The data come from the RNA Mapping Database (RMDB), libraries RFM100 and RFMREP. Structure probing data (DMS and 2A3) for a 177-nucleotide construct. The RNA was probed in 150 mM KOAc, 10 mM MgCl2 and 150 mM bicine (pH 8.5) at 24 C. For 2A3, 748 sequencing reads were counted.
RNA sequence: GGGAACGACUCGAGUAGAGUCGAAAACUGGGUAAAAUCAGGAUGUGCCGCGGAACCCGCUCCUCAGCUAGUCACACUUCGGAAGCGCGGGCAACGCAGGUAUUAUCGUUCUAAAGGGCCGGCUGCAUAAAGGAAUGCUGUUCGCAGCAUUCCUUUAAAAAGAAACAACAACAACAAC
Reactivity to DMS in 0.01 (KOAc 150mM, MgCl2 10mM, bicine 150mM(pH8.5), 24C), signal-to-noise 3, nucleotides 027 to 126: c050u000g010g000g020u000a070a040a160a090u080c050a040g020g000a040u010g010u000g010c030c020g000c000g000g020a230a300c010c010c000g020c020u000c010c030u020c050a080g000c100u000a040g020u040c250a070c080a300c070u020u080c080g000g020a030a070g000c150g000c010g010g000g020c040a020a140c030g010c050a060g010g020u000a000u030u020a030u000c040g010u010u010c030u000a040a130a140g000g010g030c010c060g000g000c010u000g000c090a150
Reactivity to 2A3 in 0.01 (KOAc 150mM, MgCl2 10mM, bicine 150mM(pH8.5), 24C), signal-to-noise 2, nucleotides 027 to 126: c020u020g000g020g050u060a070a050a000a080u090c020a060g000g110a040u020g000u000g020c000c000g050c020g010g000a070a100c000c000c000g000c000u000c000c000u100c000a060g010c110u160a020g090u230c040a030c000a000c050u010u030c000g000g060a200a070g110c030g010c000g120g030g000c000a010a010c010g040c030a020g010g010u030a000u040u080a000u010c010g040u030u030c040u140a040a060a070g000g000g000c020c000g000g010c020u050g030c000a000